RNA sequence: GGGAACGACUCGAGUAGAGUCGAAAAGAUAUGGAUCGUAUCUUUGUAGCCCAGAUCGGAAACGAUCUGAAGGCUGGAUACGAGUCCUAAGUCAAAAGGAAAGUCAGUGUUCGCACUGACUUUCCAAGUACAUAUCCCCGUUCGCGGGGAUAUGUACAAAAGAAACAACAACAACAAC
Reactivity to 2A3 in 0.01 (KOAc 150mM, MgCl2 10mM, bicine 150mM(pH8.5), 24C), signal-to-noise 3, nucleotides 027 to 126: g010a010u020a010u040g010g010a020u000c000g000u020a020u000c030u070u300u300g300u300a010g000c020c000c000a010g010a000u030c010g000g000a020a000a000c000g010a000u010c000u010g020a170a070g030g060c180u190g050g000a000u000a000c000g020a010g070u060c000c000u010a000a010g010u000c010a040a060a110a100g000g010a000a000a000g000u000c010a010g000u010g040u160u230c280g070c100a010c000u000g010a000c000u000u000u000c000c000a010a000
Reactivity to DMS in 0.01 (KOAc 150mM, MgCl2 10mM, bicine 150mM(pH8.5), 24C), signal-to-noise 2, nucleotides 027 to 126: g000a000u000a030u010g000g000a140u000c010g000u000a010u000c000u000u010u020g010u010a030g000c000c020c000a000g000a000u000c000g000g000a010a010a020c010g010a010u000c000u010g000a100a150g000g000c000u010g030g010a010u000a000c000g000a060g010u010c000c000u000a000a100g000u000c010a060a080a130a120g010g010a010a000a000g010u000c000a010g020u000g010u000u010c250g030c020a020c000u000g000a000c000u000u000u010c000c010a000a060
An RNA of 177 nucleotides, treated with 2A3 and DMS and read out base by base. 2A3 adducts were read by reverse transcription with SuperScript II with manganese. The 2A3 profile rests on 3,871 reads. The data come from the RNA Mapping Database (RMDB), library TTRDEL. For DMS, 2,592 sequencing reads were counted.